The record gives the reactivity of an RNA of 207 nucleotides to DMS and 2A3. Source: RMDB library M2RFPK, as collected in RNAgym. Conditions: 150 mM KOAc, 10 mM MgCl2 and 150 mM bicine (pH 8.5), 24 C.
RNA sequence: GGGAACGACUCGAGUAGAGUCGAAAACAACCCAACUCCUACUCAAUACGUCCUCGUCGUACAGAACGGUAACAUGUUUUCCGAACAUCCGCGCUUGGGUAUACGAGUAUACACCUUACCCGACCCUCCAACCACCUAAAGUUCGCUUUAGGUGGAACAUUAGUUAACACUUCGGUGUUAACUAAUGAAAAGAAACAACAACAACAAC
Reactivity to DMS in 0.01 (KOAc 150mM, MgCl2 10mM, bicine 150mM(pH8.5), 24C), signal-to-noise 3, nucleotides 027 to 156: c060a130a300c040c000c010a090a100c060u000c050c010u000a070c030u000c050a080a110u010a070c040g010u000c020c010u000c000g050u010c070g030u010a110c070a050g000a060a130c020g010g020u000a030a120c120a080u000g000u000u000u000u010c030c030g010a100a070c050a060u000c000c020g010c020g000c070u000u000g020g000g030u000a070u000a110c030g000a120g000u000a090u020a040c040a060c050c020u000u000a060c030c010c000g000a150c020c020c000u000c000c020a100a190c000c000a000c000c010u000a010a000a040g010u000u010c300g020c000u020u000u000a010g000g020u000g000g000a020a090
Reactivity to 2A3 in 0.01 (KOAc 150mM, MgCl2 10mM, bicine 150mM(pH8.5), 24C), signal-to-noise 9, nucleotides 027 to 156: c050a030a080c000c010c010a040a060c050u060c020c020u060a070c020u040c060a060a080u060a110c030g060u050c010c020u040c020g060u030c020g020u070a070c040a090g060a150a040c010g030g020u080a070a030c050a140u130g050u060u060u050u040c040c020g020a050a020c020a080u040c030c040g050c010g020c070u080u090g030g000g010u040a030u020a050c050g010a020g050u030a020u040a040c090a060c020c020u030u080a040c000c000c010g020a050c030c000c000u020c010c020a050a090c000c000a010c000c000u010a020a000a000g010u050u080c140g070c100u010u000u000a010g000g000u000g000g000a000a000